[RMDB]
RNA sequence: GGGAACGACUCGAGUAGAGUCGAAAAAUGGUAGUUAGUCUACUCGCUAUCCUAGUUACUUUGGAGUAAUCUAAAGUGUGUGAAAACGGGCGAAAGUCUGUAAAAUACUGGGGACAUAGGGUCAACAAGAACUAGUAGACCUUCGGGUCUACUAGAAGUUAGUAAAUAGGUUCGCCUAUUUACUAACAAAAGAAACAACAACAACAAC
Reactivity to DMS in 0.01 (KOAc 150mM, MgCl2 10mM, bicine 150mM(pH8.5), 24C), signal-to-noise 3, nucleotides 027 to 156: a120u000g020g020u000a030g010u000u000a110g010u010c020u000a020c000u000c060g010c070u000a110u000c020c030u000a060g030u000u000a020c010u000u000u000g020g000a040g010u000a140a170u000c020u010a010a000a020g030u000g010u010g010u010g010a080a060a120a060c030g020g030g010c010g020a130a080a220g020u000c040u010g030u000a030a040a050a080u000a040c020u000g000g020g010g020a040c050a100u000a090g020g010g020u000c070a050a100c040a070a130g010a120a170c020u000a010g000u000a020g000a030c000c010u000u000c300g060g010g000u000c000u000a000c000u000a000g000a020a050
Reactivity to 2A3 in 0.01 (KOAc 150mM, MgCl2 10mM, bicine 150mM(pH8.5), 24C), signal-to-noise 4, nucleotides 027 to 156: a000u070g040g010u030a040g020u120u070a040g050u050c030u020a030c020u040c030g020c030u050a050u110c000c010u010a020g030u050u080a020c010u020u010u000g020g010a010g010u100a130a140u020c010u020a010a000a010g010u020g010u020g010u010g120a080a040a010a020c020g000g010g000c020g030a080a020a020g020u010c020u010g030u070a060a030a030a030u120a060c020u030g000g010g000g000a000c020a050u090a060g060g000g050u050c020a020a030c030a110a110g070a080a040c000u000a000g000u000a000g000a000c000c000u020u030c150g100g000g000u000c000u000a000c000u000a000g000a000a000